The record gives the reactivity of an RNA of 207 nucleotides to 2A3 and DMS. For 2A3, 5,311 sequencing reads were counted. High 2A3 reactivity points to a flexible backbone, as in loops and unpaired stretches. Conditions: 150 mM KOAc, 10 mM MgCl2 and 150 mM bicine (pH 8.5), 24 C. Values cover nucleotides 27 to 156. Source: RMDB library RNAMAK, as collected in RNAgym. The DMS profile rests on 3,961 reads.
[RMDB]
RNA sequence: GGGAACGACUCGAGUAGAGUCGAAAACGACACCUGUUCGCAGGUGUCGAAAAAGAUAUGGAUUGUUCGACUUUUGACGAGAAAUGUUCGGAAACGAACAUUCUCUCGAUAAGUCGACAAUCCUAAGUCAAAAAACACGUCGUUUCGACGACGUGAAUCUCAGUAAUAGUUUCGACUAUUACUGAGAAAAAGAAACAACAACAACAAC
Reactivity to 2A3 in 0.01 (KOAc 150mM, MgCl2 10mM, bicine 150mM(pH8.5), 24C), signal-to-noise 5, nucleotides 027 to 156: c010g000a000c000a000c000c000u010g050u120u140c290g060c080a000g030g000u000g000u000c000g000a010a000a000a000a000g010a010u030a000u030g010g000a010u010u000g080u200u130c020g010a010c040u070u110u170u300g290a240c160g000a000g000a000a010a000u000g000u010u000c000g000g000a010a020a020c000g000a000a000c010a000u010u010c030u000c000u000c040g030a020u030a050a000g000u010c000g000a000c000a000a000u000c000c000u000a010a000g020u000c030a020a000a000a060a080a140c020a000c060g010u010c010g010u030u090u140c240g120a020c000g000a000c000g000u000g020a020a030
Reactivity to DMS in 0.01 (KOAc 150mM, MgCl2 10mM, bicine 150mM(pH8.5), 24C), signal-to-noise 2, nucleotides 027 to 156: c030g020a000c000a030c000c000u000g000u010u010c280g060c020a050g010g040u000g020u000c090g000a000a030a050a080a140g010a050u000a250u020g000g000a030u000u010g000u020u000c000g010a010c000u000u000u000u010g000a140c050g010a030g010a020a030a010u010g040u000u010c010g000g000a080a050a130c000g000a000a010c000a010u000u000c140u000c000u000c000g000a090u000a000a010g020u000c000g010a010c010a010a000u010c000c000u000a000a070g010u010c030a000a040a140a260a090a160c000a020c010g020u000c010g020u000u000u000c250g040a110c000g030a020c010g040u000g000a040a040